The data come from the RNA Mapping Database (RMDB), library RFMREP. Structure probing data (DMS and 2A3) for a 177-nucleotide construct. The reactions ran in a buffer of 150 mM KOAc, 10 mM MgCl2 and 150 mM bicine (pH 8.5), at 24 C.
RNA sequence: GGGAACGACUCGAGUAGAGUCGAAAAUGGGUGAUCCGCAGCCAAAUCCUAAGGACAUUUUAUUGUCUAUGGAUGCAGUUCACAGGCCAGAUGGCAAUGGGUAUCCUAGUGGGAUAUAUAUAUAUGGGCGAACUUUAUAGUUCGCUAUAAAGUUCGCAAAAGAAACAACAACAACAAC
Reactivity to DMS in 0.01 (KOAc 150mM, MgCl2 10mM, bicine 150mM(pH8.5), 24C), signal-to-noise 3, nucleotides 027 to 126: u000g010g010g020u000g010a030u000c020c050g010c080a100g020c030c080a050a230a090u000c030c040u000a100a200g010g000a020c010a010u000u010u010u010a070u020u010g010u000c000u000a300u010g010g000a040u000g010c060a050g000u000u010c030a060c050a100g020g000c020c030a110g000a140u010g000g010c060a080a060u000g000g000g010u000a050u000c050c080u000a110g000u000g010g000g000a020u010a050u000a050u000a050u010a110u000a080u060g010g010
Reactivity to 2A3 in 0.01 (KOAc 150mM, MgCl2 10mM, bicine 150mM(pH8.5), 24C), signal-to-noise 1, nucleotides 027 to 126: u070g040g020g000u000g020a080u030c020c000g060c050a010g000c010c010a140a090a020u040c020c010u060a100a090g080g000a020c000a020u160u200u080u160a140u300u070g000u000c010u010a030u080g000g020a000u060g000c030a010g000u060u040c050a040c050a080g000g200c040c020a110g060a250u150g050g000c000a020a080u000g040g010g040u050a010u050c000c020u040a070g130u120g030g000g000a000u040a000u010a000u010a010u000a000u010a050u160g010g020
Record summary: DMS adducts were read by reverse transcription with MarathonRT. Values are in units of 0.01, from 0 to 300, in steps of 10.